[RMDB]
RNA sequence: GGGAACGACUCGAGUAGAGUCGAAAAUUCCAGGGUGGUUCUUGAACCUAAGAAAUCUUCUAGAAGCCUGGGUCAUGUUGUGAGGUCCUUGUGCCUGUUGGGUCGUGGUUCUGUCUGCCUCAGGUUAUGUGUAAUUAAGUUUCGACUUAAUUACACAAAAAGAAACAACAACAACAAC
Reactivity to 2A3 in 0.01 (KOAc 150mM, MgCl2 10mM, bicine 150mM(pH8.5), 24C), signal-to-noise 2, nucleotides 027 to 126: u060u010c030c010a020g050g000g060u060g010g040u040u070c020u050u140g060a070a040c000c020u030a100a030g090a080a110a030u030c050u170u040c040u080a060g020a150a000g080c000c010u010g020g020g000u010c020a060u080g150u270u080g090u110g110a030g000g060u040c000c000u070u170g050u090g070c020c010u100g120u090u120g050g000g000u020c030g030u030g000g010u010u040c020u040g080u010c030u020g020c000c020u010c020a010g000g130u080u130a090
Reactivity to DMS in 0.01 (KOAc 150mM, MgCl2 10mM, bicine 150mM(pH8.5), 24C), signal-to-noise 8, nucleotides 027 to 126: u000u000c010c010a170g000g000g020u000g010g020u000u000c020u000u000g010a070a080c060c030u010a070a100g010a080a140a090u010c060u000u000c060u010a110g000a100a140g010c060c010u000g010g000g010u010c060a060u010g010u010u010g020u010g010a110g010g010u000c030c040u000u000g010u000g000c040c020u000g010u010u010g000g000g010u000c050g010u000g010g010u000u000c030u000g010u000c040u000g000c070c010u000c050a050g010g010u000u000a080
An RNA of 177 nucleotides, treated with 2A3 and DMS and read out base by base. DMS adducts were read by reverse transcription with MarathonRT. Source: RMDB library OK2TRN, as collected in RNAgym. Conditions: 150 mM KOAc, 10 mM MgCl2 and 150 mM bicine (pH 8.5), 24 C. The 2A3 profile rests on 2,779 reads.